Structure probing data (DMS and 2A3) for a 207-nucleotide construct.

[RMDB]
RNA sequence: GGGAACGACUCGAGUAGAGUCGAAAAAAUGUGAGUUUCAAUCCUGAAAGUUUCCUGGACUGCCAGAUUCAUAGGGUGGAUGACAUUCAAGCUAGAGAUGAAGUGGAAGGUUUUCUGCAAGAUACGUUUCCUCAGCAACUAGAAGAAUCUGAGAAGCAUGCUUCUGUUAAUUCGUUAACAGAAGCAUAAAAGAAACAACAACAACAAC
Reactivity to DMS in 0.01 (KOAc 150mM, MgCl2 10mM, bicine 150mM(pH8.5), 24C), signal-to-noise 2, nucleotides 027 to 156: a060a020u000g030u000g010a100g030u010u000u000c040a080a160u010c020c000u000g000a060a130a200g020u010u000u000c010c040u030g030g000a120c060u010g000c000c000a080g010a060u000u000c030a130u000a150g000g020g030u010g000g020a060u010g020a090c020a090u000u000c070a040a170g010c020u000a060g010a160g000a100u000g020a070a090g040u000g020g010a070a090g030g000u000u000u010u000c020u000g030c060a060a100g020a100u020a050c070g010u000u000u000c010c010u000c020a030g010c060a030a070c070u000a110g000a090a100g000a050a060u000c010u010g000a060g000a040a100g010c080
Reactivity to 2A3 in 0.01 (KOAc 150mM, MgCl2 10mM, bicine 150mM(pH8.5), 24C), signal-to-noise 4, nucleotides 027 to 156: a000a020u170g020u030g020a070g030u010u050u060c020a050a060u060c040c020u060g070a130a060a050g030u020u050u030c040c010u020g090g020a130c040u090g070c060c040a030g000a070u050u060c020a060u180a080g030g000g030u030g010g020a030u070g020a030c030a050u040u060c020a060a030g020c010u030a020g020a010g010a100u070g060a100a040g040u030g030g030a030a020g020g030u060u030u060u060c020u040g030c020a040a030g030a070u100a050c040g020u010u020u010c000c010u000c010a010g020c010a020a060c020u060a020g030a110a020g020a060a070u050c040u050g020a010g010a080a010g060c040

For DMS the reverse transcriptase was MarathonRT.